RNA sequence: GGGAACGACUCGAGUAGAGUCGAAAAAACACCAAGUCACAAAGAAGCUAAAUGCCCUGUGAGCAUAACCAUCCAUUUCAAACAGUUGAUAUAAAUGGAUUGUAGCAAAUUGUGAUCUCAGGCAAAACGAUUCUUCCCAAUUCGUUGGGAAGAAUCGAAAAGAAACAACAACAACAAC
Reactivity to DMS in 0.01 (KOAc 150mM, MgCl2 10mM, bicine 150mM(pH8.5), 24C), signal-to-noise 1, nucleotides 027 to 126: a050a040c200a140c040c000a200a000g000u000c000a010c060a030a010a050g010a300a100g000c010u000a000a120a040u010g060c000c000c050u000g040u010g000a200g020c000a040u000a170a170c160c060a000u000c000c000a000u000u000u000c140a040a220a200c150a110g010u000u000g000a120u000a060u000a020a000a000u060g000g000a000u000u000g000u000a060g010c010a070a300a230u010u000g010u000g000a050u010c000u000c050a070g040g000c010a090a020a110a100
Reactivity to 2A3 in 0.01 (KOAc 150mM, MgCl2 10mM, bicine 150mM(pH8.5), 24C), signal-to-noise 1, nucleotides 027 to 126: a000a000c100a050c000c000a010a040g020u000c000a010c000a050a030a030g030a100a020g000c010u090a200a070a000u050g000c050c040c080u260g150u150g140a040g000c000a000u020a030a030c020c000a000u000c010c000a000u000u030u030c150a170a190a110c010a180g180u090u050g240a100u080a010u040a230a060a000u000g010g000a020u000u000g030u060a000g000c020a020a000a090u040u000g000u020g020a050u090c010u000c080a050g050g080c060a060a030a000a000